[RMDB]
RNA sequence: GGGAACGACUCGAGUAGAGUCGAAAAAGAGUUGUUUGCCCAGGCUGAUUUCGAGGUCCUGGCCUCAAGCAAUCCUCCUACCUCGACCUCCCAAAGUACUGGGAUUACAGAUGUGAGCCACCAUGCCAACUUCAAGAGAAUUCGUUCUCUUGAAGUUAAAAGAAACAACAACAACAAC
Reactivity to 2A3 in 0.01 (KOAc 150mM, MgCl2 10mM, bicine 150mM(pH8.5), 24C), signal-to-noise 4, nucleotides 027 to 126: a010g100a020g000u020u010g000u020u060u080g040c020c010c010a010g040g000c010u040g060a160u090u220u210c090g050a050g050g020u070c010c030u040g070g020c000c010u060c020a030a040g010c000a030a080u060c000c010u000c010c000u040a070c000c010u020c010g030a060c010c000u020c000c020c010a020a090a000g080u070a090c060u030g020g010g010a020u030u070a030c040a030g040a050u050g060u020g040a020g000c010c010a020c010c010a030u090g030c010c000
Reactivity to DMS in 0.01 (KOAc 150mM, MgCl2 10mM, bicine 150mM(pH8.5), 24C), signal-to-noise 8, nucleotides 027 to 126: a090g000a100g000u000u000g010u000u000u000g010c300c010c020a060g010g010c050u010g010a130u000u010u010c130g010a140g000g000u010c040c050u000g000g000c070c060u010c040a050a060g000c060a060a050u000c030c010u010c020c020u000a080c040c020u000c050g000a080c120c060u000c010c010c020a040a080a100g020u000a060c090u000g000g000g010a060u000u000a050c080a060g010a060u010g010u000g000a070g010c030c020a040c040c030a060u000g010c060c080